[RMDB]
RNA sequence: GGGAACGACUCGAGUAGAGUCGAAAAGAAUGAAUAGUGGUGACACGGCUCUGGAGCCGCUCCCGAGCCGCGGCUAACGCUAUCUGAAGGGCGGCUCAUAAAUAGAAGCGAGAAGAAGACUCGCAGAACCUACUAGGCUGUUCGCAGCCUAGUAGGUAAAAGAAACAACAACAACAAC
Reactivity to 2A3 in 0.01 (KOAc 150mM, MgCl2 10mM, bicine 150mM(pH8.5), 24C), signal-to-noise 3, nucleotides 027 to 126: g080a010a050u220g020a040a030u080a090g020u090g150g060u110g040a040c030a010c030g000g000c000u070c070u130g020g000a000g000c010c010g000c020u030c010c010c000g000a020g010c000c000g000c010g020g080c090u100a100a000c020g030c060u000a030u160c060u120g040a070a070g020g000g000c000g000g000c030u030c040a160u140a170a100a010u250a030g110a100a030g010c010g000a000g000a190a020g110a040a000g050a020c000u000c000g020c030a000g050a070
Reactivity to DMS in 0.01 (KOAc 150mM, MgCl2 10mM, bicine 150mM(pH8.5), 24C), signal-to-noise 2, nucleotides 027 to 126: g010a080a080u000g020a130a110u040a050g040u000g000g000u020g000a130c030a090c000g010g010c020u000c000u040g000g000a090g000c040c050g000c000u010c020c010c000g000a060g000c050c020g000c050g000g020c060u010a070a220c090g010c070u040a030u000c000u000g010a160a130g000g010g000c000g020g000c000u000c030a130u070a070a090a070u030a080g000a180a110g000c000g000a020g000a180a140g010a160a100g010a130c000u000c020g050c030a120g000a020

Structure probing data (2A3 and DMS) for a 177-nucleotide construct. 2A3 adducts were read by reverse transcription with SuperScript II with manganese. The RNA was probed in 150 mM KOAc, 10 mM MgCl2 and 150 mM bicine (pH 8.5) at 24 C. It was measured as part of the RMDB library OK1LIB.